[RMDB]
RNA sequence: GGGAACGACUCGAGUAGAGUCGAAAAGCUCGGUGACACCGCGUCUGCCUGGGUCCGAAAGAUUUCUUGUCGCAAAUCUACAAGACAUUGGUUAACGUGUGGGCCGCUUGAGCGGCCGCUCGGCGGGAGUUCCGAUGGUGUUCGCGCCGUUGGAACUAAAAGAAACAACAACAACAAC
Reactivity to 2A3 in 0.01 (KOAc 150mM, MgCl2 10mM, bicine 150mM(pH8.5), 24C), signal-to-noise 6, nucleotides 027 to 126: g020c000u010c030g030g040u060g030a030c020a010c070c010g020c010g020u000c040u040g010c010c000u030g070g000g020u000c010c010g040a090a080a010g020a010u020u030u000c020u080u130g120u110c070g020c110a020a040a100u040c010u030a040c040a100a000g020a010c020a040u020u100g030g010u060u120a060a020c020g010u030g010u120g060g050g010c000c000g010c020u110u200g030a030g040c000g010g030c020c020g000c010u030c020g050g000c000g010g010g010
Reactivity to DMS in 0.01 (KOAc 150mM, MgCl2 10mM, bicine 150mM(pH8.5), 24C), signal-to-noise 4, nucleotides 027 to 126: g020c020u000c010g020g000u010g010a110c080a090c040c030g010c040g000u000c070u010g000c030c000u010g020g010g020u000c020c020g010a120a120a060g000a050u000u000u000c040u020u010g030u020c160g010c180a040a050a040u010c020u010a030c200a120a060g000a020c050a050u010u000g010g010u010u010a080a120c040g000u000g000u010g010g010g010c000c010g020c020u020u040g010a050g020c040g000g010c040c030g000c010u000c030g010g000c030g010g010g000